[RMDB]
RNA sequence: GGGAACGACUCGAGUAGAGUCGAAAAAAUUACCGCAGCCUGCGUUCAGGGCGGUAGUAAGGAGACGUGAAAACAAUGUGCGGGCAAAAAACGCACUAGAUACAGGAGGACAAGACUGGUGCCAGCAUCCUUAUAAUCCCUUCGGGGAUUAUAAGGAAAAAGAAACAACAACAACAAC
Reactivity to 2A3 in 0.01 (KOAc 150mM, MgCl2 10mM, bicine 150mM(pH8.5), 24C), signal-to-noise 3, nucleotides 027 to 126: a000a000u090u020a000c000c000g000c020a100g130c000c000u060g060c130g180u070u210c030a010g000g000g010c000g010g000u000a000g010u010a000a090g110g040a050g010a020c020g040u080g110a020a060a020a020c090a060a050u110g000u010g010c040g020g060g030c160a150a040a000a000a030a020c010g000c000a000c020u030a020g030a030u140a090c020a000g050g020a010g010g020a000c000a040a020g020a020c040u050g020g000u010g050c030c010a020g020c040a040
Reactivity to DMS in 0.01 (KOAc 150mM, MgCl2 10mM, bicine 150mM(pH8.5), 24C), signal-to-noise 6, nucleotides 027 to 126: a080a030u010u010a010c010c010g000c020a150g020c010c010u000g020c300g010u010u020c030a060g000g000g000c020g010g010u000a020g010u010a060a080g010g000a070g000a060c090g010u000g000a080a050a060a080c140a080a070u010g020u000g000c010g010g000g000c140a000a060a080a040a040a040c020g000c010a010c000u000a040g010a120u010a050c070a060g000g020a060g010g000a060c050a040a060g000a070c030u000g010g010u010g010c030c040a060g010c170a160
An RNA of 177 nucleotides, treated with 2A3 and DMS and read out base by base.
Source: RMDB libraries RFM100 and RFMREP, as collected in RNAgym.
Values cover nucleotides 27 to 126.
The reactions ran in a buffer of 150 mM KOAc, 10 mM MgCl2 and 150 mM bicine (pH 8.5), at 24 C.
High 2A3 reactivity points to a flexible backbone, as in loops and unpaired stretches.